An RNA of 177 nucleotides, treated with DMS and 2A3 and read out base by base. The reactions ran in a buffer of 150 mM KOAc, 10 mM MgCl2 and 150 mM bicine (pH 8.5), at 24 C. For 2A3, 1,138 sequencing reads were counted.

[RMDB]
RNA sequence: GGGAACGACUCGAGUAGAGUCGAAAAGAAAGGCGCGGAAUAAAAACAAGCUUGCAUAAACAAGCAACCGUCAAGCCAGGAGACGGAAACAAACCCUGGAAAGAACCGCGCCAAAGAAAAGGAAGAACAUACCAUCGUCCUUCGGGACGAUGGUAUGAAAAGAAACAACAACAACAAC
Reactivity to DMS in 0.01 (KOAc 150mM, MgCl2 10mM, bicine 150mM(pH8.5), 24C), signal-to-noise 1, nucleotides 027 to 126: g030a080a300a130g020g000c000g000c000g080g050a240a130u000a060a110a270a020a110c060a090a140g000c040u000u000g040c090a070u110a030a080a300c000a040a000g000c000a110a110c090c000g000u010c010a170a080g000c000c000a010g010g000a110g000a170c070g100g000a090a040a070c120a000a060a090c070c000c000u000g000g010a070a050a070g000a180a110c000c000g100c000g030c000c030a020a000a090g000a090a000a020a080g000g000a000a000g030a130a220
Reactivity to 2A3 in 0.01 (KOAc 150mM, MgCl2 10mM, bicine 150mM(pH8.5), 24C), signal-to-noise 2, nucleotides 027 to 126: g050a040a090a040g000g000c010g000c030g030g010a070a000u110a190a130a060a020a020c080a100a010g020c020u010u000g030c050a230u190a180a130a020c000a000a020g000c010a010a010c000c010g000u000c010a050a010g000c000c010a010g000g000a000g000a000c000g000g050a080a000a000c050a000a030a010c030c000c000u010g000g120a090a280a030g100a030a000c000c000g000c000g000c000c000a020a020a020g030a000a160a010a000g140g020a040a060g050a080a000